[RMDB]
RNA sequence: GGGAACGACUCGAGUAGAGUCGAAAACGAGGACCCCACUCAUCGGGGUCCGCAGUCUCAUCCUUUCUUACCUGAUGGCCGGCAUGGUCCCAGCCUCCUCGCUGGCGCCGGCUGGGCAACAUUCCGAAUAGUUCGUCCUUCGGGACGAACAAAAGAAACAACAACAACAAC
Reactivity to 2A3 in 0.01 (KOAc 150mM, MgCl2 10mM, bicine 150mM(pH8.5), 24C), signal-to-noise 2, nucleotides 027 to 129: c010g020a050g020g000a020c000c000c010c000a000c060u300c010a140u270c170g020g000g020g000u000c000c000g000c000a030g030u000c000u000c040a090u080c000c000u040u160u080c000u140u160a070c030c040u070g090a140u140g160g000c000c040g030g000c050a060u120g010g110u060c000c010c000a010g000c020c000u080c000c040u080c000g000c000u010g000g000c020g030c050c000g020g010c020u020g020g000g000c000a010a020c000a090u130u000c010c000g080a090a050u150a070

An RNA of 170 nucleotides, treated with 2A3 and read out base by base. Reactivities are given for positions 27 through 129. The 2A3 profile rests on 2,089 reads. Conditions: 150 mM KOAc, 10 mM MgCl2 and 150 mM bicine (pH 8.5), 24 C.